[RMDB]
RNA sequence: GGGAACGACUCGAGUAGAGUCGAAAACUACCAGAUUCGUCUGGUAGAAAAAGAUAUGGAUCCAUGGAGCUUUUGACGCUCCCUGGGUCGGAAACGACCCUGGGAGCGAUAAGCUCUAUGGAUCCUAAGUCAAAAAACGCGAGGUUCGCCUCGCGAAGUAAUUAUGUUAGUUCGCUAACAUAAUUACAAAAGAAACAACAACAACAAC
Reactivity to 2A3 in 0.01 (KOAc 150mM, MgCl2 10mM, bicine 150mM(pH8.5), 24C), signal-to-noise 2, nucleotides 027 to 156: c000u000a010c000c000a000g000a020u040u120c220g090u020c100u030g000g000u000a010g010a010a090a000a000a000g010a010u050a010u050g010g000a000u000c000c000a010u020g010g000a000g010c010u120u160u190u180g220a090c110g000c030u010c070c010c010u010g010g060g020u000c030g000g010a030a000a010c010g000a000c030c010c000u030g000g000g060a010g000c000g010a010u010a010a000g000c000u000c000u000a000u000g000g000a000u000c000c000u000a010a010g000u000c000a000a000a000a000a030a140c040g010c000g010a000g000g030u120u190c260g160c040c010u000c000g000c010g010a010a010